[RMDB]
RNA sequence: GGGAACGACUCGAGUAGAGUCGAAAAUGGAGGGAUAUUAACCUUUACCACACUUACUGUAACAAAAUGUAAUAACAGUUUCUCCUGGGUGUUCUCAUUGUCUCUGCUAAAUUUGCAUUCAGUGGAACGAAAUUCCAGUUUUCGAACUGGAAUUUCGAAAAGAAACAACAACAACAAC
Reactivity to 2A3 in 0.01 (KOAc 150mM, MgCl2 10mM, bicine 150mM(pH8.5), 24C), signal-to-noise 1, nucleotides 027 to 126: u080g000g000a010g060g000g000a030u110a150u230u180a160a080c000c010u010u000u040a120c030c000a050c000a000c050u080u080a010c000u020g060u120a250a030c000a070a170a050a050u160g100u190a140a110u080a200a080c040a000g000u030u030u030c050u050c000c020u050g050g000g000u010g090u000u010c020u030c010a020u010u050g040u030c010u000c060u120g030c010u040a150a230a110u080u120u140g000c080a070u060u000c000a010g010u040g020g000a030a010
Reactivity to DMS in 0.01 (KOAc 150mM, MgCl2 10mM, bicine 150mM(pH8.5), 24C), signal-to-noise 1, nucleotides 027 to 126: u000g010g020a050g030g000g010a060u000a060u050u020a110a160c030c040u000u000u010a140c040c020a130c180a070c120u000u000a040c000u010g000u030a040a190c150a060a120a060a130u020g000u010a030a060u000a050a060c040a020g010u000u000u020c060u010c020c090u000g000g000g000u000g030u020u020c030u000c040a070u010u000g010u000c040u000c120u000g080c030u000a030a030a080u000u000u020g030c150a070u010u010c090a080g060u000g000g030a090a110
Chemical mapping of a 177-nucleotide RNA with 2A3 and DMS. Source: RMDB library OK2TST, as collected in RNAgym. 2A3 adducts were read by reverse transcription with SuperScript II with manganese. DMS (dimethyl sulfate) methylates the pairing face of unpaired adenines and cytosines.